[RMDB]
Description
Conditions: 150 mM KOAc, 10 mM MgCl2 and 150 mM bicine (pH 8.5), 24 C. The record gives the reactivity of an RNA of 177 nucleotides to DMS and 2A3. Source: RMDB libraries RFM100 and RFMREP, as collected in RNAgym. High DMS reactivity at an A or C suggests that its Watson-Crick edge is free.

RNA sequence: GGGAACGACUCGAGUAGAGUCGAAAACAAUUGUUCCGUACUUCAUGCACGUUUUAUGCCGUAGUAUUCAGCAAAAGCAAGGCGGAUAAGUUUCCAUAACAAAACAAAAUCCAAAAAGGCCGGACUGCCUUUGAGUAACUUUCGAGUUACUCAAAGGAAAAGAAACAACAACAACAAC
Reactivity to DMS in 0.01 (KOAc 150mM, MgCl2 10mM, bicine 150mM(pH8.5), 24C), signal-to-noise 5, nucleotides 027 to 126: c090a070a120u030u030g010u010u010c010c020g000u000a030c040u000u000c060a100u030g010c040a060c120g010u000u000u000u010a090u010g010c020c080g000u010a060g020u000a110u020u010c060a110g010c060a040a040a090a070g000c060a090a120g000g010c100g000g010a030u010a020a240g020u000u000u000c080c050a150u040a060a120c240a070a000a030a040c110a020a060a050a070u000c020c030a040a050a070a090a040g010g000c040c000g000g000a030c080u000g000
Reactivity to 2A3 in 0.01 (KOAc 150mM, MgCl2 10mM, bicine 150mM(pH8.5), 24C), signal-to-noise 4, nucleotides 027 to 126: c030a040a120u130u100g020u090u030c010c010g020u040a140c020u040u050c030a050u120g010c030a020c070g050u000u030u040u110a090u090g030c040c020g030u050a050g030u020a190u080u120c040a020g010c030a040a070a040a020g000c010a010a020g070g000c050g010g000a030u040a060a030g020u010u020u000c050c010a060u120a170a060c070a030a060a010a000c020a030a110a030a030u010c020c010a050a040a060a030a000g060g000c030c000g010g030a020c020u060g010